[RMDB]
RNA sequence: GGGAACGACUCGAGUAGAGUCGAAAAAAUUUACAUUAUCCAGGUGUAGCGGUGAAAUUCGUAGAGAUCUGGUGGAUAAUGAACCGGUGGCGAAGGCGAAAGAUAACCGCUGAAAUGCUGAAGUGAAGACUGAAUGAAUAUUCGUAUUCAUUCAGUCAAAAGAAACAACAACAACAAC
Reactivity to DMS in 0.01 (KOAc 150mM, MgCl2 10mM, bicine 150mM(pH8.5), 24C), signal-to-noise 7, nucleotides 027 to 126: a070a060u000u000u000a110c030a070u010u000a070u000c060c020a110g010g010u000g010u010a040g010c010g010g000u000g010a090a130a070u000u000c020g020u000a140g010a120g010a110u000c010u000g010g010u000g000g010a100u010a080a100u010g010a130a040c010c010g010g010u000g000g010c300g010a090a140g010g010c010g010a020a040a030g010a050u010a110a040c010c020g000c010u000g000a050a050a100u000g010c030u000g010a060a150g010u000g010a110a090
Reactivity to 2A3 in 0.01 (KOAc 150mM, MgCl2 10mM, bicine 150mM(pH8.5), 24C), signal-to-noise 3, nucleotides 027 to 126: a000a000u160u140u070a050c010a030u040u100a050u100c030c020a010g030g000u050g020u060a010g000c010g000g000u030g040a040a040a040u060u010c010g010u070a040g010a020g020a180u050c020u030g030g070u060g040g050a060u110a260a120u170g040a020a020c020c000g040g050u040g020g040c070g020a040a020g110g000c000g020a040a000a000g150a010u030a030a010c000c010g000c020u010g010a010a010a030u130g000c030u050g030a100a040g060u070g070a070a030